Conditions: 150 mM KOAc, 10 mM MgCl2 and 150 mM bicine (pH 8.5), 24 C. Structure probing data (DMS and 2A3) for a 177-nucleotide construct. 2A3 adducts were read by reverse transcription with SuperScript II with manganese. DMS adducts were read by reverse transcription with MarathonRT.
RNA sequence: GGGAACGACUCGAGUAGAGUCGAAAAGAUAUGGACCCACCUCUCGCUAUCCAGGCGACGAAGUCGGAAACGACAGAGCCUGAAUAGCGAUGUGGGUCCUAAGUCAAAACAGGCCUUCGGGCCUGAACUAGAGCUUGUAGUUCGCUACAAGCUCUAGAAAAGAAACAACAACAACAAC
Reactivity to DMS in 0.01 (KOAc 150mM, MgCl2 10mM, bicine 150mM(pH8.5), 24C), signal-to-noise 3, nucleotides 027 to 126: g000a050u010a300u010g000g010a000c000c000c000a000c010c000u000c010u000c010g000c000u000a000u000c010c000a010g000g010c010g010a120c230g000a090a180g000u000c000g000g030a100a110a230c000g000a010c000a010g010a210g010c000c000u010g020a010a010u000a000g000c010g010a000u000g000u000g000g000g000u000c000c000u000a000a060g010u000c040a130a040a150a240c020a010g000g000c000c000u000u020c210g030g020g010c000c000u000g000a010a140
Reactivity to 2A3 in 0.01 (KOAc 150mM, MgCl2 10mM, bicine 150mM(pH8.5), 24C), signal-to-noise 1, nucleotides 027 to 126: g010a020u060a060u120g010g000a000c020c000c000a010c020c000u000c010u000c010g030c000u000a000u000c000c010a000g010g030c000g280a300c050g050a150a020g000u010c010g040g050a090a050a040c020g000a020c000a010g060a010g020c000c000u040g000a010a010u000a010g000c020g000a000u100g010u000g000g000g000u020c010c000u020a010a010g010u030c000a020a030a060a100c010a010g010g020c000c000u180u280c270g100g000g020c000c000u000g000a020a010